An RNA of 207 nucleotides, treated with 2A3 and DMS and read out base by base. Conditions: 150 mM KOAc, 10 mM MgCl2 and 150 mM bicine (pH 8.5), 24 C. For 2A3, 910 sequencing reads were counted.
[RMDB]
RNA sequence: GGGAACGACUCGAGUAGAGUCGAAAAGGCGAUGGAGAGGCCCUCUCAUUAAUGCGGAGUUGUCACGCUGACAGAAUGAUAUUAGAUGUCCGCUUCCGGUUACAUCGCGGCGAUGAUUACAUAGGACAUCGAUUACCCAUUAGCUUCGGGGAAGCAACAUCAUACGCCAUUUCGAUGGCGUAUGAUGAAAAGAAACAACAACAACAAC
Reactivity to 2A3 in 0.01 (KOAc 150mM, MgCl2 10mM, bicine 150mM(pH8.5), 24C), signal-to-noise 2, nucleotides 027 to 156: g040g000c030g010a010u090g020g010a050g020a000g040g040c010c000c000u000c010u010c000a090u050u200a050a080u160g040c060g010g000a040g030u040u120g090u090c040a010c140g030c050u050g010a000c000a000g200a160a110u080g050a010u080a120u110u110a090g000a040u010g000u000c020c020g030c030u050u030c050c010g020g030u040u040a020c020a050u080c080g000c070g150g020c040g020a030u020g030a040u060u180a080c100a090u120a100g000g040a000c000a010u050c000g000a000u010u060a080c030c030c010a030u070u050a020g030c080u020u010c050g100g000g020g000a010a000g010c020a020a000
Reactivity to DMS in 0.01 (KOAc 150mM, MgCl2 10mM, bicine 150mM(pH8.5), 24C), signal-to-noise 1, nucleotides 027 to 156: g030g010c060g010a160u000g050g000a140g000a100g000g000c030c070c030u040c020u010c020a070u000u000a040a090u010g010c060g010g030a160g020u000u000g000u000c070a090c050g010c040u000g030a090c080a080g010a100a100u000g010a100u000a070u000u000a140g010a100u000g040u010c000c020g000c120u000u000c060c050g000g020u000u000a040c040a000u010c010g050c060g020g000c030g050a070u000g020a130u000u000a060c080a150u010a250g000g000a020c000a040u000c000g000a110u000u020a060c050c010c000a090u000u010a090g050c060u000u000c110g020g040g000g050a070a060g000c030a140a270